[RMDB]
RNA sequence: GGGAACGACUCGAGUAGAGUCGAAAAUCGACCGCAGCGCGCGGCCCGCGCGUGUUCCCGGGUAGGUCGCUAGAGGCGUGCGGCGACGCACGUCCCAGAUGAAUGACUGUCCACGACAGAACCCGGCCCUAUCCCUUAUGUUCGCAUAAGGGAUAGGAAAAGAAACAACAACAACAAC
Reactivity to 2A3 in 0.01 (KOAc 150mM, MgCl2 10mM, bicine 150mM(pH8.5), 24C), signal-to-noise 5, nucleotides 027 to 126: u090c010g030a020c030c030g020c100a060g010c020g000c000g000c010g070g180c040c030c030g040c010g000c010g020u050g040u070u100c020c000c010g000g010g000u050a050g000g030u020c000g000c010u080a050g020a060g100g000c000g000u000g000c000g020g000c030g020a030c010g000c000a000c000g010u020c000c000c000a090g030a090u170g110a180a060u140g040a070c010u020g020u030c060c080a090c190g040a010c030a030g040a030a030c000c000c010g050g000c010
Reactivity to DMS in 0.01 (KOAc 150mM, MgCl2 10mM, bicine 150mM(pH8.5), 24C), signal-to-noise 3, nucleotides 027 to 126: u010c040g010a100c050c020g000c110a190g020c030g000c100g080c120g000g000c110c070c150g000c000g060c050g030u000g030u020u010c140c000c000g020g000g010u010a090g030g000u010c000g000c080u010a160g030a110g000g000c000g000u000g020c020g020g000c140g000a170c020g020c010a010c020g000u010c000c010c020a080g040a130u030g020a110a100u030g000a110c000u000g000u010c010c100a130c100g000a050c020a100g000a150a080c010c000c000g010g000c300